[RMDB]
RNA sequence: GGGAACGACUCGAGUAGAGUCGAAAAGUGUAGGGUCACUUUGAUGGCGGUACUAUGAAUUGAUGCAAGGUGUGGAGCGACCUUAAACAGUUCUGGUGGUGCUCUGAAUGGAGUGCUCUACUGAGAUUUAACUUAUGCACGUUCGCGUGCAUAAGAAGUCGUUAAUAGAGUUCGCUCUAUUAACGACAAAAGAAACAACAACAACAAC
Reactivity to DMS in 0.01 (KOAc 150mM, MgCl2 10mM, bicine 150mM(pH8.5), 24C), signal-to-noise 2, nucleotides 027 to 156: g010u000g000u010a040g000g010g010u020c000a030c020u000u000u010g020a170u000g010g000c030g020g000u000a020c030u000a050u010g020a060a070u000u000g020a160u000g030c200a060a030g060g010u000g070u010g010g000a090g060c050g020a040c000c020u000u000a070a130a150c000a050g010u000u000c010u000g020g060u000g000g020u000g010c020u000c070u000g020a180a140u000g000g020a050g020u000g010c010u000c020u000a010c040u020g010a080g010a120u000u000u000a080a210c000u000u000a020u000g000c010a010c000g020u000u010c270g040c020g020u000g000c000a000u000a000a010g000a050a110
Reactivity to 2A3 in 0.01 (KOAc 150mM, MgCl2 10mM, bicine 150mM(pH8.5), 24C), signal-to-noise 9, nucleotides 027 to 156: g100u060g010u020a020g020g000g050u300c020a010c030u040u040u100g090a100u100g030g020c030g030g140u030a020c020u030a050u270g020a020a010u060u040g100a140u090g130c060a020a010g020g000u070g030u140g080g040a050g020c020g030a010c000c000u030u020a050a100a010c000a010g000u000u010c010u010g020g010u030g030g300u010g010c080u080c030u150g080a060a070u180g020g000a000g000u010g000c000u000c000u010a020c020u050g030a050g020a110u080u170u170a050a010c000u000u000a000u000g000c000a000c010g020u030u040c140g010c000g080u000g000c000a000u000a000a000g000a010a010
An RNA of 207 nucleotides, treated with DMS and 2A3 and read out base by base. High DMS reactivity at an A or C suggests that its Watson-Crick edge is free. The reactions ran in a buffer of 150 mM KOAc, 10 mM MgCl2 and 150 mM bicine (pH 8.5), at 24 C. For 2A3, 19,247 sequencing reads were counted. For DMS the reverse transcriptase was MarathonRT. Reactivities are rounded to 0.1 and cut off at 0 and 3. For DMS, 4,661 sequencing reads were counted.